[RMDB]
RNA sequence: GGGAACGACUCGAGUAGAGUCGAAAAUGGGAUGGGUCGCCUUGGCCAACUCUAAGAAAUUCCAGUUGUUAGUCGAAUCCAACAAGCUGAGUAAAAUCAUGCAAGAUGACUUGAAUCGCUAUACAUCGUUAUCGGACAUGUUCGCAUGUCCGAUAACAAAAGAAACAACAACAACAAC
Reactivity to 2A3 in 0.01 (KOAc 150mM, MgCl2 10mM, bicine 150mM(pH8.5), 24C), signal-to-noise 2, nucleotides 027 to 126: u020g000g000g000a020u030g150g000g000u000c060g050c110c040u060u140g050g030c040c050a050a030c020u040c020u060a060a090g030a040a120a010u050u000c070c060a000g000u020u030g030u110u090a040g040u040c020g030a000a020u000c060c020a010a060c050a160a000g040c000u080g000a130g040u050a010a110a010a040u040c000a020u300g010c000a030a050g030a020u060g000a030c000u000u190g050a120a000u010c000g000c030u060a070u030a240c190a110u130c120
Reactivity to DMS in 0.01 (KOAc 150mM, MgCl2 10mM, bicine 150mM(pH8.5), 24C), signal-to-noise 2, nucleotides 027 to 126: u090g000g010g000a110u000g030g000g020u020c050g000c070c200u000u010g040g000c030c010a110a050c040u030c030u000a180a100g000a040a100a210u000u000c000c030a020g000u030u000g000u000u020a100g000u010c060g000a080a070u030c060c050a040a070c040a100a120g000c020u000g000a040g020u010a090a010a070a050u010c050a070u000g010c020a210a100g000a030u000g000a060c110u000u000g000a030a040u000c070g030c010u000a050u000a100c140a040u000c160
Structure probing data (2A3 and DMS) for a 177-nucleotide construct. For 2A3 the reverse transcriptase was SuperScript II with manganese. The 2A3 profile rests on 659 reads. For DMS, 1,553 sequencing reads were counted. The reactions ran in a buffer of 150 mM KOAc, 10 mM MgCl2 and 150 mM bicine (pH 8.5), at 24 C. Reactivities are rounded to 0.1 and cut off at 0 and 3.